[RMDB]
RNA sequence: GGGAACGACUCGAGUAGAGUCGAAAAGAUAUGGACCGACUCCAUCGAUCUUACGUAACAUCUUUCGGAAACGAAAGUGGUAAGGGAGGAGGGGUCCUAAGUCAAAAGAACGGCUUCGGCCGUUCAACCUUCUAAAGCUGUUCGCAGCUUUAGAAGGAAAAGAAACAACAACAACAAC
Reactivity to DMS in 0.01 (KOAc 150mM, MgCl2 10mM, bicine 150mM(pH8.5), 24C), signal-to-noise 3, nucleotides 027 to 126: g020a050u000a300u000g010g000a020c010c010g010a130c000u000c000c000a250u000c150g000a060u010c000u000u000a000c000g020u000a030a080c170a020u010c000u000u010u000c000g000g000a080a080a200c010g000a000a010a000g020u010g000g010u000a010a010g000g000g010a040g040g010a010g020g000g000g020u010c000c010u000a000a060g010u000c020a070a060a140a140g010a020a010c000g010g020c000u000u020c240g030g000c000c000g000u010u010c000a060a100
Reactivity to 2A3 in 0.01 (KOAc 150mM, MgCl2 10mM, bicine 150mM(pH8.5), 24C), signal-to-noise 3, nucleotides 027 to 126: g000a020u070a050u150g000g000a000c000c030g300a300c040u000c000c020a300u300c070g050a060u000c000u000u020a020c010g070u040a040a060c030a300u200c010u010u020u000c000g020g020a070a030a040c000g010a010a010a010g000u010g020g020u000a000a010g030g000g000a020g000g000a010g050g020g010g010u030c010c000u010a110a020g060u030c040a130a000a010a120g000a000a000c000g000g020c000u110u130c300g160g020c000c000g000u000u010c010a000a010
Description: Structure probing data (DMS and 2A3) for a 177-nucleotide construct. It was measured as part of the RMDB library TTRDEL. The RNA was probed in 150 mM KOAc, 10 mM MgCl2 and 150 mM bicine (pH 8.5) at 24 C. 2A3 adducts were read by reverse transcription with SuperScript II with manganese. Reactivities are given for positions 27 through 126. The 2A3 profile rests on 5,017 reads.